[RMDB]
RNA sequence: GGGAACGACUCGAGUAGAGUCGAAAACAACAUUUUGACUCUGGAAAAACUAAGCCUUCACGGCUGCACGGGUAUUGACGCAGGAAUUGGAUGUCUUGGAAACCUGCCACAGCUUAAAAUGUUGGACCCCACCCCCUCCGUUCGCGGAGGGGGUGGGAAAAGAAACAACAACAACAAC
Reactivity to 2A3 in 0.01 (KOAc 150mM, MgCl2 10mM, bicine 150mM(pH8.5), 24C), signal-to-noise 1, nucleotides 027 to 126: c000a000a000c000a030u010u010u010u010g030a030c010u000c010u000g170g050a080a080a080a000a000c100u210a030a010g000c000c040u220u210c120a000c130g010g020c000u000g000c010a020c040g030g000g000u130a160u110u200g200a020c030g000c050a000g070g070a080a240u130u130g090g020a210u120g030u000c000u000u040g000g030a020a020a020c000c000u000g020c000c000a000c000a000g030c000u010u040a000a140a000a000u080g040u000u000g000g000a000c000